[RMDB]
RNA sequence: GGGAACGACUCGAGUAGAGUCGAAAAUUGGUUUACGCUUCGGCGUAAACCAACGUGAAACCUUUGUGCGUUGCACUCGUUGAAACACAGCCCAUUGGGCUGGUGGAGAGUGGACGCACUCUGGUCAAGGCCUUCCUGUGUUUCGACACAGGAAGAAUCUGUCCUGUCUGUUCGCAGACAGGACAGAAAAAGAAACAACAACAACAAC
Reactivity to 2A3 in 0.01 (KOAc 150mM, MgCl2 10mM, bicine 150mM(pH8.5), 24C), signal-to-noise 1, nucleotides 027 to 156: u000u070g000g000u000u000u000a000c000g000c010u000u100c300g210g000c000g000u010a000a000a000c000c000a000a010c010g020u040g220a030a070a150c060c000u000u080u000g000u000g000c030g020u000u120g300c000a000c020u070c000g170u210u000g030a030a020a000c200a000c000a220g000c000c010c050a280u100u300g000g000g000c010u020g060g000u000g000g030a080g000a000g020u000g000g000a000c010g000c010a000c000u000c000u000g010g000u040c100a060a060g180g030c000c000u000u000c000c000u010g010u010g040u000u130u110c220g080a000c000a000c000a000g000g000a000a000g000a000a000
This 207-nucleotide RNA was probed chemically with 2A3. For 2A3 the reverse transcriptase was SuperScript II with manganese. Source: RMDB library RNAMAK, as collected in RNAgym. Conditions: 150 mM KOAc, 10 mM MgCl2 and 150 mM bicine (pH 8.5), 24 C.